[RMDB]
RNA sequence: GGGAACGACUCGAGUAGAGUCGAAAAGAUAUGGAUUAAGGGAGACGGCAUGUCGGAAACGACAUGACGUCUUUGAUCUUACGGUCCUAAGUCAAAAUCCUUGUAAGGCUUCGGCCUUACAAGGAAAUCUAAGAGCGAAGUUCGCUUCGCUCUUAGAAAAAGAAACAACAACAACAAC
Reactivity to DMS in 0.01 (KOAc 150mM, MgCl2 10mM, bicine 150mM(pH8.5), 24C), signal-to-noise 2, nucleotides 027 to 126: g000a090u010a250u020g010g020a000u000u010a050a070g000g000g000a030g000a000c000g000g020c000a010u010g000u000c000g000g000a050a040a130c010g000a020c000a010u000g000a000c000g010u000c010u020u010u010g020a060u000c020u000u000a050c300g030g000u000c010c010u000a070a150g000u020c080a080a080a120a140u000c000c000u010u000g000u010a000a000g000g020c000u000u000c160g020g020c000c000u000u000a000c000a000a000g000g000a000a000a020